RNA sequence: GGGAACGACUCGAGUAGAGUCGAAAAGUCGCCUUGCAGAUGCGUUCAUGAGUUCAACUUCAAUUCAGAAUCGUACGAUGUUCAGGAACAUUGACUGUAACAUUGGUUGGCGACCACUGUAAGAGCGAAUCCUCACUACGUUCGCGUAGUGAGGAUUAAAAGAAACAACAACAACAAC
Reactivity to 2A3 in 0.01 (KOAc 150mM, MgCl2 10mM, bicine 150mM(pH8.5), 24C), signal-to-noise 9, nucleotides 027 to 126: g070u020c010g000c010c000u020u010g000c020a060g040a300u010g040c060g100u070u110c060a090u230g080a020g070u080u100c050a080a080c060u140u130c090a030a110u130u040c040a040g080a120a140u100c050g040u080a050c050g020a010u020g010u010u050c050a050g090g140a130a090c050a170u160u250g090a070c020u040g070u180a040a000c010a030u020u020g070g000u030u050g020g000c020g040a020c000c000a010c000u010g010u020a020a000g040a030g030c010g000
Reactivity to DMS in 0.01 (KOAc 150mM, MgCl2 10mM, bicine 150mM(pH8.5), 24C), signal-to-noise 5, nucleotides 027 to 126: g010u030c000g000c000c000u000u000g020c030a040g000a090u020g010c150g000u010u020c150a130u000g010a050g000u010u000c210a110a100c240u020u030c190a010a040u000u010c070a080g000a060a080u020c110g020u030a120c060g000a010u000g020u000u000c030a070g000g000a060a160c270a150u020u040g010a180c010u000g010u020a030a020c030a010u000u000g010g000u010u010g000g000c140g000a020c030c000a040c020u000g010u000a000a010g010a170g000c000g010